[RMDB]
RNA sequence: GGGAACGACUCGAGUAGAGUCGAAAACGAAGGCCAUUCGCACCUCUAACUUAAGCCACAGGGGAAAACAAAACGGCUAGAUUCCACUUGAGGUGAUCAUCGAUUGGAAACUAUAUGUAGCCGAACAGAUACGUGAGGGAUUCGUCCCUCACGUAUCAAAAGAAACAACAACAACAAC
Reactivity to DMS in 0.01 (KOAc 150mM, MgCl2 10mM, bicine 150mM(pH8.5), 24C), signal-to-noise 3, nucleotides 027 to 126: c060g000a080a050g000g000c030c030a050u010u000c080g000c050a110c030c060u000c050u000a130a140c120u010u000a090a120g000c010c060a060c050a040g000g000g000g000a090a020a060a080c090a060a060a110a150c070g000g020c000u000a050g000a160u000u000c020c010a010c120u000u000g000a030g020g030u000g000a060u000c120a050u000c010g010a010u000u000g020g010a050a060a090c080u000a100u000a130u010g010u000a020g030c000c020g010a110a090c160a110
Reactivity to 2A3 in 0.01 (KOAc 150mM, MgCl2 10mM, bicine 150mM(pH8.5), 24C), signal-to-noise 3, nucleotides 027 to 126: c040g040a050a000g060g020c020c020a040u030u040c030g030c050a050c020c010u010c020u060a120a120c030u150u160a060a030g050c040c020a030c070a060g040g000g000g030a000a070a030a070c060a010a150a000a030c020g010g000c010u010a000g000a100u050u010c010c010a040c010u020u030g000a010g020g040u080g100a070u140c040a030u050c020g060a040u020u030g010g040a030a050a050c090u080a050u050a060u300g110u120a010g000c000c000g020a030a010c030a030
Source: RMDB library OK2TST, as collected in RNAgym. An RNA of 177 nucleotides, treated with DMS and 2A3 and read out base by base. For DMS, 2,230 sequencing reads were counted. The reactions ran in a buffer of 150 mM KOAc, 10 mM MgCl2 and 150 mM bicine (pH 8.5), at 24 C. Values cover nucleotides 27 to 126. For DMS the reverse transcriptase was MarathonRT.